[RMDB]
RNA sequence: GGGAACGACUCGAGUAGAGUCGAAAAAGUCAGAGGGCGCUACCAUGCAAACUAGGGCUGGCUACUCUUGCACAGAAUCACAUCUCCAUAAUUGUCAGUGCAAGAAGGACAAUUAUACCAUUUAAUGAAAACGUUUACCUGUUCGCAGGUAAACGAAGGAUAGUCUUAACUUCGGUUAAGACUAUCCAAAAGAAACAACAACAACAAC
Reactivity to 2A3 in 0.01 (KOAc 150mM, MgCl2 10mM, bicine 150mM(pH8.5), 24C), signal-to-noise 7, nucleotides 027 to 156: a000g010u010c000a010g010a030g040g040g000c040g000c030u070a210c080c080a100u220g010c030a040a060a080c040u070a040g040g080g010c020u000g030g000c020u100a090c000u020c000u000u000g000c020a010c000a020g110a070a090u140c040a050c020a180u060c080u030c110c030a020u020a030a000u010u010g000u000c010a000g000u010g010c000a000a010g010a010a010g010g000a000c000a000a010u000u030a030u030a080c030c080a120u130u160u230a180a140u170g100a060a080a010a000c000g000u000u000u000a000c000c000u010g010u030u060c180g010c080a000g000g000u000a000a000a000c000g000a010a010
Reactivity to DMS in 0.01 (KOAc 150mM, MgCl2 10mM, bicine 150mM(pH8.5), 24C), signal-to-noise 2, nucleotides 027 to 156: a130g030u010c070a080g010a100g030g020g010c110g020c060u010a070c060c070a100u010g000c030a140a110a130c090u000a090g010g010g010c030u000g030g010c010u000a140c010u000c040u000u020g010c010a050c030a090g020a110a140u020c070a060c040a140u010c040u000c030c060a100u000a010a040u000u010g000u020c030a300g010u000g000c010a010a040g010a040a110g010g000a050c030a010a050u000u000a050u000a120c070c070a130u000u000u000a070a090u000g000a110a050a080a120c020g010u000u000u000a010c000c020u000g000u010u000c210g020c030a020g020g020u000a020a010a020c010g020a000a040